[RMDB]
RNA sequence: GGGAACGACUCGAGUAGAGUCGAAAAGCCUCGCUGGUGUUGACCAUUGGCCGAGCGGUAACGCUUCCGUUUAUCACUAUCUAUUUGGCCGAACAUUUUCAGCUAGCGCCAGACAAGGUUGGGCUGGGAUCGCAGUUUAGUUCGCUAAACUGCGAUCAAAAGAAACAACAACAACAAC
Reactivity to DMS in 0.01 (KOAc 150mM, MgCl2 10mM, bicine 150mM(pH8.5), 24C), signal-to-noise 2, nucleotides 027 to 126: g000c010c000u010c100g030c020u000g000g030u010g010u010u000g000a090c130c050a170u010u000g000g000c060c070g010a040g020c060g030g020u000a040a040c040g000c300u000u010c180c060g020u010u000u050a020u010c050a060c050u010a090u000c120u020a150u010u020u000g000g030c000c000g020a040a090c110a070u000u000u000u020c090a080g010c010u000a050g010c040g000c000c020a020g020a070c100a090a100g030g020u010u010g010g000g020c030u000g010g030
Reactivity to 2A3 in 0.01 (KOAc 150mM, MgCl2 10mM, bicine 150mM(pH8.5), 24C), signal-to-noise 1, nucleotides 027 to 126: g030c010c000u000c060g010c010u050g010g010u020g000u130u080g040a100c060c070a130u060u120g000g000c000c010g030a010g000c020g040g040u000a080a000c030g010c000u110u050c070c020g000u000u070u070a110u070c030a020c030u080a060u170c000u040a200u220u100u160g000g000c000c000g030a050a050c070a170u050u040u110u150c010a030g010c040u070a010g030c000g010c000c000a030g070a120c060a140a000g110g000u020u010g090g120g020c010u070g000g030
This 177-nucleotide RNA was probed chemically with DMS and 2A3. For DMS, 1,805 sequencing reads were counted. 2A3 adducts were read by reverse transcription with SuperScript II with manganese. The RNA was probed in 150 mM KOAc, 10 mM MgCl2 and 150 mM bicine (pH 8.5) at 24 C. DMS adducts were read by reverse transcription with MarathonRT. The 2A3 profile rests on 1,004 reads. Reactivities are rounded to 0.1 and cut off at 0 and 3.